[RMDB]
RNA sequence: GGGAACGACUCGAGUAGAGUCGAAAAAGGCACUUCGCAAUGUGUACUCAAACAUUGCUUAUUCAAACACGCUUCACAAUGUGCGACAAAGAAACAUUGUUAUAAGAGCUAAUGUUUUAACAUUGGCAAAACCGAGUUAGCUUCGGCUAACUCGGAAUCGGUCUUUUCAGUUCGCUGAAAAGACCGAAAAAGAAACAACAACAACAAC
Reactivity to 2A3 in 0.01 (KOAc 150mM, MgCl2 10mM, bicine 150mM(pH8.5), 24C), signal-to-noise 2, nucleotides 027 to 156: a020g130g000c040a000c050u060u030c070g000c000a010a010u010g020u020g040u170a100c040u090c190a060a070a010c000a010u000u010g010c000u080u060a120u080u110c050a060a090a000c020a010c090g000c020u000u010c030a000c000a000a000u000g020u000g000c020g020a040c140a060a180a000g090a010a000a000c010a000u000u000g020u050u060a130u040a160a080g040a020g000c000u020a000a000u000g020u000u130u040u190a120a000c000a010u000u000g010g010c000a040a080a000a000c000c000g000a000g000u010u010a010g000c000u020u020c300g010g000c000u000a000a000c010u000c010g000g030a000a000
An RNA of 207 nucleotides, treated with 2A3 and read out base by base.
Conditions: 150 mM KOAc, 10 mM MgCl2 and 150 mM bicine (pH 8.5), 24 C.
For 2A3, 1,115 sequencing reads were counted.
For 2A3 the reverse transcriptase was SuperScript II with manganese.
Values cover nucleotides 27 to 156.